[RMDB]
RNA sequence: GGGAACGACUCGAGUAGAGUCGAAAACAGCACCAGGUUAAUGGCCUCGGGUAUGGUAAAAACGCUAGAGAUUGGACAAUCCGCAGCCAAGCCUCUUCGCAAGAAGUGGAAGGUUCAGAGACUAAAUGGUUGUGGGUGGCAGACGGUUUCGCGAAUGCGUUAUUGUCAGCUUCGGCUGACAAUAACGAAAAGAAACAACAACAACAAC
Reactivity to DMS in 0.01 (KOAc 150mM, MgCl2 10mM, bicine 150mM(pH8.5), 24C), signal-to-noise 1, nucleotides 027 to 156: c020a090g000c020a230c010c020a090g020g000u000u010a100a170u000g020g000c010c020u080c120g040g020g030u000a040u010g010g030u000a010a050a010a190a060c040g000c010u000a110g000a070g040a150u000u000g010g000a160c010a160a110u040c010c020g020c010a050g060c010c000a050a130g000c000c010u000c010u010u000c040g000c160a030a100g010a070a140g050u000g050g040a190a080g000g020u000u020c000a130g010a250g020a060c000u010a090a160a250u000g040g030u000u000g030u000g010g010g060u000g030g040c050a190g000a140c070g000g040u000u010u000c010g000c060g000a090a160u010g000

Conditions: 150 mM KOAc, 10 mM MgCl2 and 150 mM bicine (pH 8.5), 24 C. Structure probing data (DMS) for a 207-nucleotide construct. Values cover nucleotides 27 to 156. It was measured as part of the RMDB library ARCHII. For DMS the reverse transcriptase was MarathonRT.